[RMDB]
RNA sequence: GGGAACGACUCGAGUAGAGUCGAAAAGGGCGUACCGUCGUUUCAGACGGUAUGUCUGCACGAACGCUUGAAGGCUGCUCGCCUGAGUUCGUGGGUAGCUGCUUGAGGCGGCCAGUGAUGGUUUCGUGCAUCCUAUCACAUUCGUGUGAUAGGAUGCAAAAGAAACAACAACAACAAC
Reactivity to 2A3 in 0.01 (KOAc 150mM, MgCl2 10mM, bicine 150mM(pH8.5), 24C), signal-to-noise 2, nucleotides 027 to 126: g040g000g010c010g000u000a000c000c000g010u000c000g000u040u160u300c010a030g000a000c000g020g000u000a000u000g000u010c000u000g000c010a000c000g020a040a000c020g020c070u110u220g030a100a000g000g000c000u090g000c050u150c090g000c000c010u110g060a050g020u090u030c010g000u020g000g020g010u060a000g000c020u060g020c000u050u100g050a060g010g070c010g000g220c030c020a080g000u050g130a110u100g050g000u010u010u020c000g000u010
Reactivity to DMS in 0.01 (KOAc 150mM, MgCl2 10mM, bicine 150mM(pH8.5), 24C), signal-to-noise 1, nucleotides 027 to 126: g020g000g000c000g020u040a000c000c000g000u000c000g010u040u010u000c270a100g000a000c010g010g010u000a010u000g000u000c000u000g040c040a010c010g000a020a110c020g010c140u010u020g000a080a020g000g000c000u000g000c150u010c090g010c020c040u000g030a030g010u000u000c110g020u000g000g000g020u000a070g000c020u000g010c030u000u010g040a100g010g020c050g000g050c110c060a110g000u020g000a110u000g000g020u010u010u000c020g030u010